RNA sequence: GGGAACGACUCGAGUAGAGUCGAAAAUCAUACGGCGAGAGAAUUCAAAGACUAGGACGAGUUGGGCGCACAAAGCCAGGAGCAGUGAUCCGGUCAGGAGUAACUAUGAAAGGAUUACAGGAAAUACAAUGCACGUCGUAUUCGUACGACGUGCAUUAAAAGAAACAACAACAACAAC
Reactivity to DMS in 0.01 (KOAc 150mM, MgCl2 10mM, bicine 150mM(pH8.5), 24C), signal-to-noise 2, nucleotides 027 to 126: u100c090a040u010a010c040g040g000c030g000a170g010a140g000a180a050u000u010c090a080a110a250g000a090c100u000a090g030g000a040c090g000a000g020u000u010g000g000g020c020g000c030a050c160a060a070a130g030c000c000a010g010g000a130g000c090a020g000u000g010a030u000c010c000g010g000u010c060a120g000g000a140g030u000a120a070c270u000a070u000g050a060a070a090g010g030a020u030u000a060c080a190g040g010a000a040a100u000a030c080
Reactivity to 2A3 in 0.01 (KOAc 150mM, MgCl2 10mM, bicine 150mM(pH8.5), 24C), signal-to-noise 1, nucleotides 027 to 126: u110c000a060u050a300c020g000g000c020g100a000g000a020g030a030a130u160u000c060a070a060a050g120a060c120u230a060g070g070a000c000g000a000g040u040u000g050g000g000c100g030c030a070c040a090a000a000g070c000c000a050g000g000a030g000c000a050g000u050g040a050u000c010c000g020g000u080c000a010g000g060a090g010u050a050a070c010u120a020u110g040a060a060a080g000g000a000u110u000a020c000a000g000g080a010a010a000u120a070c090
This 177-nucleotide RNA was probed chemically with DMS and 2A3. Reactivities are rounded to 0.1 and cut off at 0 and 3. Reactivities are given for positions 27 through 126. The reactions ran in a buffer of 150 mM KOAc, 10 mM MgCl2 and 150 mM bicine (pH 8.5), at 24 C. For DMS, 1,297 sequencing reads were counted.